[RMDB]
This 177-nucleotide RNA was probed chemically with DMS and 2A3.
Reactivities are given for positions 27 through 126.
For DMS, 2,305 sequencing reads were counted.
RNA sequence: GGGAACGACUCGAGUAGAGUCGAAAAGCGCAGGCCUAUGGCUUCCCGCUGAUGCCGAUCGACGGGAUCCUGGUCGGCACCGCCGCCAUGGCCGCACUGGAGGCCACCACCUCGCCGUCGGUCAAGAGACCUCCGAUUUAUUCGUAAAUCGGAGGUCAAAAGAAACAACAACAACAAC
Reactivity to DMS in 0.01 (KOAc 150mM, MgCl2 10mM, bicine 150mM(pH8.5), 24C), signal-to-noise 1, nucleotides 027 to 126: g010c020g020c140a040g010g000c000c010u030a060u000g040g020c050u050u010c150c010c020g010c050u030g000a060u000g000c000c030g020a000u030c020g000a030c120g040g030g000a060u030c060c040u000g020g040u030c070g000g010c020a080c050c110g010c070c020g000c000c030a090u030g000g000c000c000g000c040a040c020u000g000g000a100g000g000c000c050a130c030c070a080c050c000u000c070g050c000c030g110u000c040g010g000u010c000a090a060g020a300
Reactivity to 2A3 in 0.01 (KOAc 150mM, MgCl2 10mM, bicine 150mM(pH8.5), 24C), signal-to-noise 3, nucleotides 027 to 126: g090c060g020c060a030g020g060c020c030u150a070u070g000g000c010u050u020c000c010c000g010c060u080g020a120u080g040c040c030g020a010u010c020g070a050c030g000g010g030a020u070c010c000u070g000g030u080c010g000g000c020a010c020c090g040c020c030g010c000c010a040u080g000g000c010c010g000c000a020c020u060g060g040a030g030g000c000c000a020c010c010a040c010c000u020c030g080c020c010g000u030c020g020g010u040c050a060a030g080a010